The data come from the RNA Mapping Database (RMDB), library TTRDES. Chemical mapping of a 177-nucleotide RNA with 2A3 and DMS. The DMS profile rests on 1,165 reads.
[RMDB]
RNA sequence: GGGAACGACUCGAGUAGAGUCGAAAAGAUAUGGAACAUGCUACUGCUGAUGACCUGCCUCCGUCGGAAACGACGGAGGGCAGCAAGGCAAACAUGUUCCUAAGUCAAACUCUCGUUCGCGAGAGAAGUAUCCUAGCAACUUCGGUUGCUAGGAUACAAAAGAAACAACAACAACAAC
Reactivity to 2A3 in 0.01 (KOAc 150mM, MgCl2 10mM, bicine 150mM(pH8.5), 24C), signal-to-noise 2, nucleotides 027 to 126: g020a000u100a010u200g020g000a010a010c000a000u020g030c030u070a300c120u080g040c020u050g050a240u210g040a160c010c010u010g000c020c000u000c000c000g000u000c010g030g010a130a090a110c030g010a010c000g000g000a020g000g000g010c000a010g000c010a070a190g050g000c000a000a070a040c020a000u010g010u010u000c010c000u020a080a000g000u000c020a020a070a300c010u030c010u000c020g010u130u140c300g000c010g140a000g010a010g000a050a010
Reactivity to DMS in 0.01 (KOAc 150mM, MgCl2 10mM, bicine 150mM(pH8.5), 24C), signal-to-noise 2, nucleotides 027 to 126: g020a050u000a300u020g020g000a020a050c010a000u000g000c080u010a150c300u000g020c000u000g030a300u070g020a150c300c000u000g010c010c000u000c010c010g000u000c000g020g000a080a040a160c040g000a000c010g000g000a000g030g000g010c010a000g020c090a090a120g010g020c000a020a060a070c000a000u000g010u000u010c000c000u000a040a060g010u000c020a230a130a230c010u000c000u000c000g000u020u000c180g000c050g000a000g000a030g000a040a090